[RMDB]
Overview: The record gives the reactivity of an RNA of 177 nucleotides to 2A3 and DMS. Conditions: 150 mM KOAc, 10 mM MgCl2 and 150 mM bicine (pH 8.5), 24 C. It was measured as part of the RMDB library OK2TST. The DMS profile rests on 3,317 reads.
RNA sequence: GGGAACGACUCGAGUAGAGUCGAAAAUGCCUCUGUGCUUAUGGAUGUGUUGUCUUGAAUCAACAGUAAGCACUCAAGGUUGGGAGUGAACUGUCUUAGAUGUUAUUGAUGUGCUCAGAACACAGAGGAUUCCUCACGUUUUCGAACGUGAGGAAUCAAAAGAAACAACAACAACAAC
Reactivity to 2A3 in 0.01 (KOAc 150mM, MgCl2 10mM, bicine 150mM(pH8.5), 24C), signal-to-noise 3, nucleotides 027 to 126: u140g040c010c000u000c010u000g030u010g030c020u120u010a010u030g070g070a280u180g110u010g010u160u180g020u040c020u040u060g070a060a050u040c000a000a020c000a000g020u060a090a060g070c000a000c000u020c000a060a080g290g060u220u100g250g060g000a000g000u040g000a070a060c000u020g020u050c050u120u140a110g000a050u080g090u230u060a160u120u070g080a070u040g060u090g010c020u010c060a040g020a070a000c000a000c000a010g010a010g040
Reactivity to DMS in 0.01 (KOAc 150mM, MgCl2 10mM, bicine 150mM(pH8.5), 24C), signal-to-noise 3, nucleotides 027 to 126: u020g010c020c000u000c010u000g030u000g020c040u010u010a060u010g010g020a090u000g030u000g020u020u000g010u010c030u010u000g010a080a060u010c050a140a020c010a040g000u010a110a180g010c010a030c000u000c010a080a110g020g020u020u010g010g010g000a040g030u000g010a110a060c020u000g000u000c120u010u010a150g010a040u000g000u000u000a130u010u000g000a040u000g000u000g020c040u000c040a040g000a060a060c010a010c000a000g000a040g000